Structure probing data (2A3 and DMS) for a 177-nucleotide construct. DMS adducts were read by reverse transcription with MarathonRT.
RNA sequence: GGGAACGACUCGAGUAGAGUCGAAAAAGCAGGUCAACAAAUCAUGUUAACCUGUCGAAUCAGCUCAAGAUCUGAAAGUACUGUUGCAUGGUUUAAGGAUGAUGAACGCAUCGAAUCUGCUGGAAGAGCCUUGAUAGAAAUUCGUUUCUAUCAAGGCAAAAGAAACAACAACAACAAC
Reactivity to 2A3 in 0.01 (KOAc 150mM, MgCl2 10mM, bicine 150mM(pH8.5), 24C), signal-to-noise 5, nucleotides 027 to 126: a020g010c010a000g020g020u040c010a010a030c020a090a140a020u050c010a010u030g010u090u190a010a010c030c070u040g000u000c010g010a030a130u010c000a010g010c050u060c210a160a090g020a290u060c020u040g030a050a060a020g060u100a030c030u040g030u050u020g020c020a020u020g010g040u020u030u030a060a050g120g000a040u070g000a020u110g100a130a040c180g010c090a000u010c000g020a040a020u010c010u010g020c010u030g040g020a110a070g050a020
Reactivity to DMS in 0.01 (KOAc 150mM, MgCl2 10mM, bicine 150mM(pH8.5), 24C), signal-to-noise 7, nucleotides 027 to 126: a040g020c010a010g010g020u000c070a110a110c110a040a060a040u000c080a030u000g000u000u010a020a000c030c190u000g000u000c020g010a300a090u010c020a030g010c110u000c190a120a110g000a110u010c010u000g000a040a100a150g010u010a030c030u000g000u010u000g000c010a010u000g010g010u000u010u000a080a090g010g000a040u000g010a060u010g020a100a110c280g000c010a020u010c020g000a100a030u010c020u000g010c020u000g010g020a120a080g010a190
Values cover nucleotides 27 to 126. The RNA was probed in 150 mM KOAc, 10 mM MgCl2 and 150 mM bicine (pH 8.5) at 24 C.